[RMDB]
RNA sequence: GGGAACGACUCGAGUAGAGUCGAAAAGACGCCUUUAGAAGAAGAGGCUAGGGGGUAUUCCGGUGUGGGAUACUUAGUAAUAUGCACCGCUAAUUGCAUAAGAUUGUAGGACGGAAUUUACAGUCUUUAGAGAUAAGCACGUUCGCGUGCUUAUCAACGUUAGCUUAUGGUUCGCCAUAAGCUAACGAAAAGAAACAACAACAACAAC
Reactivity to DMS in 0.01 (KOAc 150mM, MgCl2 10mM, bicine 150mM(pH8.5), 24C), signal-to-noise 1, nucleotides 027 to 156: g040a180c050g000c020c000u000u000u000a130g030a130a120g030a120a170g000a040g030g040c020u010a040g020g020g000g020g000u000a090u000u010c000c050g060g040u010g040u000g010g030g000a100u000a020c050u000u000a080g010u010a040a130u010a060u000g000c020a090c050c010g030c050u000a030a130u000u000g020c000a130u000a050a040g020a030u030u000g020u000a010g020g010a260c040g030g020a050a300u000u000u000a030c000a030g030u000c020u000u000u010a090g010a150g000a010u000a000a020g000c000a000c010g000u010u000c180g020c040g030u010g000c010u010u030a000u010c000a030a010
Reactivity to 2A3 in 0.01 (KOAc 150mM, MgCl2 10mM, bicine 150mM(pH8.5), 24C), signal-to-noise 4, nucleotides 027 to 156: g050a010c060g020c020c000u070u070u090a190g050a300a020g020a030a030g000a060g040g000c020u050a070g040g000g000g010g020u030a070u060u050c050c060g040g050u110g040u120g060g050g010a010u010a060c000u050u050a040g030u030a030a160u060a060u170g020c020a020c020c060g020c150u110a120a050u140u100g020c020a020u020a130a000g010a020u010u060g010u030a010g010g070a040c080g040g070a060a050u100u100u040a030c020a000g000u000c000u010u040u080a120g030a000g000a040u010a000a000g000c000a000c010g010u030u050c160g020c000g070u000g000c000u000u000a000u000c000a000a000